[RMDB]
Annotation: The record gives the reactivity of an RNA of 207 nucleotides to 2A3 and DMS. For 2A3 the reverse transcriptase was SuperScript II with manganese. For DMS the reverse transcriptase was MarathonRT. The reactions ran in a buffer of 150 mM KOAc, 10 mM MgCl2 and 150 mM bicine (pH 8.5), at 24 C.

RNA sequence: GGGAACGACUCGAGUAGAGUCGAAAAGGGCAGUAUUCGUACUGCCCCAAGCGUACUACCACGUAACAUCCAUUAGGGAGCUCGGUGUCCCAAAUAGGACACGAGAGCGACGAUCUAAUGGUGGUGGUAUCGCCUACUCGCCUGAUUCGUCAGGCGACUACACAAGCGGAUUCGUCCGCUUGUGUAGAAAAGAAACAACAACAACAAC
Reactivity to 2A3 in 0.01 (KOAc 150mM, MgCl2 10mM, bicine 150mM(pH8.5), 24C), signal-to-noise 4, nucleotides 027 to 156: g010g000g000c010a000g020u040a050u070u200c300g050u070a030c010u000g010c000c010c000c000a070a020g000c010g010u060a080c060u000a000c030c010a010c010g040u050a030a040c040a240u130c010c000a000u010u000a000g000g000g010a010g000c000u000c000g030g000u010g010u020c020c010c030a100a150a110u300a080g000g030a000c000a000c020g300a300g000a000g120c000g090a100c010g010a000u000c000u010a000a000u000g010g010u000g000g000u000g000g000u030a050u260c000g000c000c000u040a090c010u010c000g010c000c000u010g010a020u040u060c140g030u020c140a000g000g000c000g000a010
Reactivity to DMS in 0.01 (KOAc 150mM, MgCl2 10mM, bicine 150mM(pH8.5), 24C), signal-to-noise 1, nucleotides 027 to 156: g050g030g030c010a010g000u000a000u000u000c260g030u000a030c010u000g000c000c000c000c000a020a030g050c030g040u000a060c120u000a040c000c000a030c030g040u000a080a040c030a150u020c030c010a020u000u000a050g020g000g010a110g020c000u000c020g060g020u000g000u000c010c000c040a050a160a160u020a060g000g000a030c000a020c010g000a160g010a060g020c000g010a040c170g010a040u000c020u000a030a040u010g000g000u000g020g010u010g000g000u000a020u000c020g020c000c030u000a060c140u000c000g010c000c000u010g010a100u000u020c190g040u000c000a000g000g010c010g000a030